[RMDB]
RNA sequence: GGGAACGACUCGAGUAGAGUCGAAAACUCUCAGCUGAAAUUGCGAGCUGGAGGAAUAAUGAGAUAGGUCUCCAUAUCCGAAACUGGUAUGGUAAGAGUGGGGACAUUCUGAGCAUCAGUAAGGCCGUCAUGCUAAGUAUUUCGAUACUUAGCAUGAAAAAGAAACAACAACAACAAC
Reactivity to DMS in 0.01 (KOAc 150mM, MgCl2 10mM, bicine 150mM(pH8.5), 24C), signal-to-noise 9, nucleotides 027 to 126: c030u000c000u040c020a020g020c020u000g000a080a080a120u030u020g010c150g010a060g000c020u000g000g000a030g000g010a100a060u030a090a070u010g010a080g000a070u020a080g010g010u010c020u010c020c020a030u000a070u010c010c030g010a090a110a080c080u010g010g010u020a080u010g010g000u010a130a070g000a030g010u000g000g010g040g010a100c020a030u000u010c020u010g000a130g010c040a040u010c070a040g000u010a040a100g000g000c050c070g010
Reactivity to 2A3 in 0.01 (KOAc 150mM, MgCl2 10mM, bicine 150mM(pH8.5), 24C), signal-to-noise 9, nucleotides 027 to 126: c000u010c000u000c000a000g000c000u030g060a050a060a080u200u150g060c100g040a010g000c000u010g000g040a020g020g060a050a050u150a040a070u140g060a040g030a120u110a080g100g030u000c010u000c020c000a020u070a290u060c010c030g090a160a080a040c050u090g100g070u260a130u180g040g000u040a060a000g030a010g010u030g000g010g000g010a000c010a000u060u000c000u010g020a010g020c000a020u070c000a030g020u090a030a020g040g000c010c000g020